[RMDB]
RNA sequence: GGGAACGACUCGAGUAGAGUCGAAAAGGCAUGGCCCCAGCCUCCUCGCUGGCGCCGGCUGGGCAACGAUCCGAGGGGACUGUCCCUCUCGAGAAUCGGCAAAUGGGGCCCCUCGCUCGUAUCUCCGCGAAUUAACAAAGUUCGCUUUGUUAAUUCGAAAAGAAACAACAACAACAAC
Reactivity to 2A3 in 0.01 (KOAc 150mM, MgCl2 10mM, bicine 150mM(pH8.5), 24C), signal-to-noise 3, nucleotides 027 to 126: g020g000c030a030u080g010g000c030c000c000c000a010g020c000c010u040c010c010u100c060g040c010u040g050g040c030g020c040c000g020g010c000u020g000g050g000c040a050a060c010g010a010u030c030c010g000a010g000g020g010g010a030c080u170g150u250c020c020c000u000c000u010c010g190a230g040a090a100u070c020g000g010c030a010a050a060u070g010g000g010g000c020c000c000c000u010c010g020c010u010c010g020u090a150u030c020u000c020c010g020
Reactivity to DMS in 0.01 (KOAc 150mM, MgCl2 10mM, bicine 150mM(pH8.5), 24C), signal-to-noise 3, nucleotides 027 to 126: g010g000c000a060u010g020g000c000c030c010c010a060g000c000c020u010c070c040u010c210g030c030u000g010g010c190g020c050c020g010g000c030u000g020g010g020c130a100a120c010g010a030u000c050c000g010a020g010g000g000g010a150c130u000g020u010c120c010c010u000c010u000c000g010a140g000a100a040u000c010g010g010c090a030a050a070u000g010g000g010g020c010c010c040c010u000c020g010c190u000c030g000u000a120u000c010u000c020c110g000